Chemical mapping of a 207-nucleotide RNA with DMS and 2A3. DMS adducts were read by reverse transcription with MarathonRT. For DMS, 4,932 sequencing reads were counted. Conditions: 150 mM KOAc, 10 mM MgCl2 and 150 mM bicine (pH 8.5), 24 C. 2A3 adducts were read by reverse transcription with SuperScript II with manganese.
RNA sequence: GGGAACGACUCGAGUAGAGUCGAAAAGGUUCCUUGAUUGCUCCUCUCGAGGUCUGGUAUGAUAUGGCACUUUAUGGUAGAUUAGGUGGCUUUGGAUCGUGGGUUGCGGAGGAUAUUUUUAAGGACAUUCGGAUUGAGCGACAGAGGUAUCAUUUACCCACUUUUACAGAUUCGUCUGUAAAAGUGGAAAAGAAACAACAACAACAAC
Reactivity to DMS in 0.01 (KOAc 150mM, MgCl2 10mM, bicine 150mM(pH8.5), 24C), signal-to-noise 2, nucleotides 027 to 156: g010g020u000u000c020c010u000u020g020a100u000u000g000c010u000c020c060u000c020u010c040g030a100g010g030u000c050u000g020g020u010a070u000g030a110u010a080u000g020g020c020a060c050u000u020u010a040u010g000g020u000a070g030a130u000u000a080g030g020u010g020g020c060u000u000u010g000g010a070u000c030g030u010g020g000g030u010u000g010c040g000g020a150g000g020a080u000a010u000u000u020u010u020a130a120g000g020a050c060a100u010u000c070g000g010a140u000u010g020a100g030c000g010a060c050a110g010a030g030g010u000a060u020c030a120u000u010u000a160c120
Reactivity to 2A3 in 0.01 (KOAc 150mM, MgCl2 10mM, bicine 150mM(pH8.5), 24C), signal-to-noise 5, nucleotides 027 to 156: g090g010u060u080c010c000u030u050g100a150u050u080g020c010u010c020c010u030c030u020c020g040a030g010g050u020c030u070g000g030u150a080u130g050a070u040a070u130g040g000c020a020c070u080u110u090a090u150g050g020u050a070g030a170u120u080a040g040g030u030g030g000c050u050u050u050g040g010a040u060c040g010u050g010g030g000u030u090g020c010g010g020a010g020g000a010u030a060u060u130u030u030u100a040a030g040g000a010c010a070u070u050c050g020g010a020u040u070g010a030g000c000g020a010c020a030g040a000g050g010u060a050u110c030a030u100u140u160a070c070